[RMDB]
RNA sequence: GGGAACGACUCGAGUAGAGUCGAAAACUAAGGAGCGUGUGCUGGCGGCGGUCCUUCACGGUGCGAUGAUCGGGGCGGAUUACCAGUACGUGGGCGAGUGGUGUGCCCUGCUCCGAGCAUCGGAAAAGGUUGUGGCGUCGUUCGUGGCGCCACGACCAAAAGAAACAACAACAACAAC
Reactivity to 2A3 in 0.01 (KOAc 150mM, MgCl2 10mM, bicine 150mM(pH8.5), 24C), signal-to-noise 9, nucleotides 027 to 126: c030u060a040a040g060g000a030g040c010g000u060g010u050g020c010u010g020g010c000g010g000c000g000g050u020c010c000u030u040c050a030c040g030g010u070g020c000g010a020u030g000a020u010c000g000g000g000g000c010g010g020a020u040u090a060c010c010a020g090u060a040c030g050u090g010g030g040c050g020a060g080u060g030g040u080g020u070g050c000c000c020u030g000c000u000c000c000g000a000g000c000a010u000c000g020g000a040a050a010a020
Reactivity to DMS in 0.01 (KOAc 150mM, MgCl2 10mM, bicine 150mM(pH8.5), 24C), signal-to-noise 7, nucleotides 027 to 126: c060u010a060a080g010g000a070g010c020g020u010g010u010g010c020u000g000g010c040g010g000c040g000g010u000c020c030u010u000c070a080c100g010g010u020g010c010g010a040u000g000a050u000c010g000g000g000g010c010g000g000a100u020u020a050c050c020a060g010u020a070c090g020u010g010g000g010c030g000a130g010u010g000g000u000g010u020g000c120c030c010u020g020c020u000c000c020g000a010g010c020a010u000c010g000g000a060a080a080a090
The record gives the reactivity of an RNA of 177 nucleotides to 2A3 and DMS. For DMS the reverse transcriptase was MarathonRT. 2A3 is a SHAPE reagent: it acylates the 2'-hydroxyl of flexible nucleotides of all four kinds. Source: RMDB library OK1LIB, as collected in RNAgym. For DMS, 42,400 sequencing reads were counted. The reactions ran in a buffer of 150 mM KOAc, 10 mM MgCl2 and 150 mM bicine (pH 8.5), at 24 C.